[RMDB]
RNA sequence: GGGAACGACUCGAGUAGAGUCGAAAAGAUAUGGAAUUGUCUGGAGUUCGCUCUCGGAAACGAGAGCAGAACGAUGAAAGAGCAAUUCCUAAGUCAAAAGUGACGAAUCGUUCGCGAUUCGUCACAAGUACUAGACUAAGUUCGCUUAGUCUAGUACAAAAGAAACAACAACAACAAC
Reactivity to 2A3 in 0.01 (KOAc 150mM, MgCl2 10mM, bicine 150mM(pH8.5), 24C), signal-to-noise 5, nucleotides 027 to 126: g000a000u010a000u040g000g010a000a000u000u010g010u010c000u010g000g010a020g000u000u000c010g000c010u000c000u000c000g000g000a010a000a000c000g000a000g000a000g000c010a020g000a000a000c010g070a140u030g010a000a010a000g020a030g060c000a000a000u000u000c000c000u000a000a000g000u000c010a010a010a050a200g010u010g000a000c000g000a010a000u010c010g040u080u100c300g020c010g150a000u000u000c000g000u000c000a000c000a000a000
Reactivity to DMS in 0.01 (KOAc 150mM, MgCl2 10mM, bicine 150mM(pH8.5), 24C), signal-to-noise 7, nucleotides 027 to 126: g000a010u000a010u010g000g000a020a000u000u000g010u000c000u000g000g000a010g010u000u000c000g000c000u000c000u000c000g010g010a010a000a020c000g010a010g000a010g010c000a000g010a000a010c000g000a110u010g000a090a170a030g000a050g010c010a010a010u000u000c000c000u000a000a080g000u000c010a080a070a120a140g010u000g000a010c000g000a010a000u000c000g020u000u010c220g020c010g010a010u000u000c000g000u000c000a000c000a020a080
Chemical mapping of a 177-nucleotide RNA with 2A3 and DMS. The RNA was probed in 150 mM KOAc, 10 mM MgCl2 and 150 mM bicine (pH 8.5) at 24 C. As a SHAPE reagent, 2A3 marks flexible, mostly unpaired nucleotides at the ribose 2'-OH. It was measured as part of the RMDB library TTRDEL. For 2A3, 62,582 sequencing reads were counted. 2A3 adducts were read by reverse transcription with SuperScript II with manganese.